[RMDB]
RNA sequence: GGGAACGACUCGAGUAGAGUCGAAAAGUGUACUUCGGUACACAGCCGUCCUAAGUCGGAAACAUCGAUCGUGGGAACUUCGACGAUCUAUCGGAAACGAUAGGGAGAAGUACCCACGGGAGUUUCCGAUAUGGAGUCACAGUCUGUUCGCAGACAAAGAUUUCCAACAUUUCGAUGUUGGAAAUCUAAAAGAAACAACAACAACAAC
Reactivity to DMS in 0.01 (KOAc 150mM, MgCl2 10mM, bicine 150mM(pH8.5), 24C), signal-to-noise 1, nucleotides 027 to 156: g090u000g000u000a010c000u000u030c270g180g040u020a010c000a040c010a090g020c000c050g020u010c040c030u030a160a250g010u000c010g000g000a040a030a030c040a120u010c180g000a060u000c010g050u020g000g010g010a130a060c000u000u000c010g020a190c060g000a110u000c010u010a020u000c010g010g000a130a170a290c040g000a030u010a020g070g000g000a060g020a000a050g000u000a010c010c000c000a010c010g010g000g020a090g010u000u000u010c000c020g000a000u010a080u030g000g010a100g000u000c020a030c060a120g000u000c000u000g000u030u010c140g050c030a000g000a060c020a110a290
Reactivity to 2A3 in 0.01 (KOAc 150mM, MgCl2 10mM, bicine 150mM(pH8.5), 24C), signal-to-noise 4, nucleotides 027 to 156: g000u000g010u010a010c020u050u140c300g080g010u000a000c010a000c020a000g120c030c030g120u040c020c010u050a080a070g010u000c000g000g050a010a000a010c030a300u170c070g190a110u060c010g000u010g000g000g010a030a030c000u000u010c000g250a300c000g000a080u000c000u000a000u000c000g050g040a130a040a050c010g000a000u000a000g010g010g000a020g000a000a000g010u040a090c000c000c000a000c000g000g000g000a020g010u000u000u000c000c010g000a000u000a010u040g030g000a030g060u140c100a040c070a170g010u000c020u010g060u100u160c240g040c120a000g010a020c050a040a100